[RMDB]
RNA sequence: GGGAACGACUCGAGUAGAGUCGAAAACCCGCCCUCUCCGGGGAAUCGUGAACCGGGGGUUCCGACCGGGCCGACAGGGGAUGAAGAGCUUUUGCUUUGCUGAGCAGAUGAUGACCACGCCCUUCGCUGUAGGGGCAUAUUUCGAUAUGCCCCUACAAAAAGAAACAACAACAACAAC
Reactivity to 2A3 in 0.01 (KOAc 150mM, MgCl2 10mM, bicine 150mM(pH8.5), 24C), signal-to-noise 3, nucleotides 027 to 126: c000c000c000g020c010c000c020u090c010u040c020c020g050g000g000g040a010a090u120c080g060u140g100a040a040c000c000g050g010g000g000g000u060u060c020c020g010a030c000c030g000g030g010c010c000g040a040c080a070g040g000g000g020a000u070g070a030a080g060a030g040c020u030u040u040u030g010c020u070u070u090g080c110u130g010a000g010c030a010g000a090u090g010a030u050g020a060c010c000a030c050g020c000c000c000u110u140c060g000c090
Reactivity to DMS in 0.01 (KOAc 150mM, MgCl2 10mM, bicine 150mM(pH8.5), 24C), signal-to-noise 2, nucleotides 027 to 126: c020c000c000g000c000c030c010u020c030u010c060c010g000g000g030g000a090a050u000c100g010u030g000a150a090c040c080g010g000g000g010g030u000u000c050c020g010a070c090c000g030g010g020c060c050g010a020c150a100g020g030g000g000a020u050g020a100a060g010a140g010c050u010u000u020u040g000c030u000u000u030g050c100u050g000a080g000c010a030g020a060u000g010a070u000g020a090c110c020a040c120g000c020c020c020u010u010c130g040c230
An RNA of 177 nucleotides, treated with 2A3 and DMS and read out base by base.
For DMS, 3,522 sequencing reads were counted.
For 2A3 the reverse transcriptase was SuperScript II with manganese.
The reactions ran in a buffer of 150 mM KOAc, 10 mM MgCl2 and 150 mM bicine (pH 8.5), at 24 C.